[RMDB]
RNA sequence: GGGAACGACUCGAGUAGAGUCGAAAAGCCCGUCAGAGGGCGCUACCAUGCAAACUAGGGCUGGCUACUCUUGCACAGAAUCACCUUUCUAUAAUAACCAGUGCAAGAAGGGUUAUUAUACCAUUUAAAAAUCGUGAAUGCUUCGGCAUUCACGAAACAUGAUAGACGUGUUCGCACGUCUAUCAUGAAAAGAAACAACAACAACAAC
Reactivity to DMS in 0.01 (KOAc 150mM, MgCl2 10mM, bicine 150mM(pH8.5), 24C), signal-to-noise 1, nucleotides 027 to 156: g000c030c000c000g000u030c140a160g000a100g000g000g010c140g000c080u000a060c060c050a200u000g060c000a130a210a150c070u000a100g020g000g030c000u000g020g000c030u020a140c050u000c000u000u020g020c010a090c000a120g000a100a150u020c090a050c010c110u000u010u000c040u000a060u000a010a050u000a040a000c030c010a300g000u000g000c020a030a060g000a060a060g020g010g000u000u000a050u020u000a000u000a090c130c030a110u020u000u000a050a020a100a060a060u000c000g080u000g010a020a010u010g000c000u000u010c300g030g000c000a010u000u010c020a020c020g010a040a020a160
Reactivity to 2A3 in 0.01 (KOAc 150mM, MgCl2 10mM, bicine 150mM(pH8.5), 24C), signal-to-noise 4, nucleotides 027 to 156: g010c010c030c000g020u010c020a040g020a030g080g030g000c010g000c010u110a260c060c090a090u240g000c000a000a020a060c010u030a020g040g000g000c010u010g000g000c010u040a040c010u020c000u000u000g000c010a010c000a000g070a110a080u080c040a170c030c020u110u260u180c090u080a020u000a030a000u000a010a000c010c000a010g000u010g000c000a010a000g000a010a020g010g000g000u000u000a000u000u020a010u010a040c000c060a110u110u230u300a040a140a050a020a050u040c000g010u010g000a000a000u000g000c020u050u070c140g060g000c000a000u000u000c010a000c000g000a000a000a000
About this RNA
An RNA of 207 nucleotides, treated with DMS and 2A3 and read out base by base. Conditions: 150 mM KOAc, 10 mM MgCl2 and 150 mM bicine (pH 8.5), 24 C.